[RMDB]
RNA sequence: GGGAACGACUCGAGUAGAGUCGAAAAGGCAAUUCGUUGCCCCUUACGCGUACUACAGAGGCUUUUGACGAGCUGCAUCUACCCACCUCGUCCCAAAUAGGACGAGAGGAUGUCGCUCGAUAAGCCUCUGUAUCGCAGCAUGAUGAUUCGUCAUCAAACUCUUUUCGCUAUUCGUAGCGAAAAGAGUAAAAGAAACAACAACAACAAC
Reactivity to DMS in 0.01 (KOAc 150mM, MgCl2 10mM, bicine 150mM(pH8.5), 24C), signal-to-noise 2, nucleotides 027 to 156: g000g000c030a020a160u010u000c200g010u000u000g010c000c000c010c020u000u000a110c080g010c000g020u010a060c120u000a000c040a030g010a030g010g000c000u000u000u000u010g020a250c090g030a000g060c000u010g040c020a010u000c000u000a020c000c000c040a300c100c000u020c030g050u000c010c000c020a070a160a300u000a050g000g010a040c000g010a020g000a090g000g000a040u000g000u000c300g020c010u000c000g000a070u000a010a050g010c010c000u010c000u010g000u000a000u000c020g030c010a170g020c060a120u010g000a080u010g000a130u000u000c160g010u010c030a030u000c010a040a250
Reactivity to 2A3 in 0.01 (KOAc 150mM, MgCl2 10mM, bicine 150mM(pH8.5), 24C), signal-to-noise 6, nucleotides 027 to 156: g030g000c010a010a030u140u110c250g110u150u030g000c010c000c000c000u060u210a130c130g010c000g040u100a110c070u000a000c030a000g000a010g000g000c010u030u070u140u210g300a160c040g000a000g000c000u000g000c000a000u000c010u040a120c060c060c040a050c010c000u010c010g000u030c000c040c000a300a300a140u300a100g000g000a000c000g000a000g000a000g010g000a000u000g040u050c010g000c010u000c000g000a000u010a010a000g000c000c000u000c000u000g000u000a000u010c000g000c000a020g060c040a100u090g010a000u010g020a020u050u140c200g080u030c090a010u030c000a040a040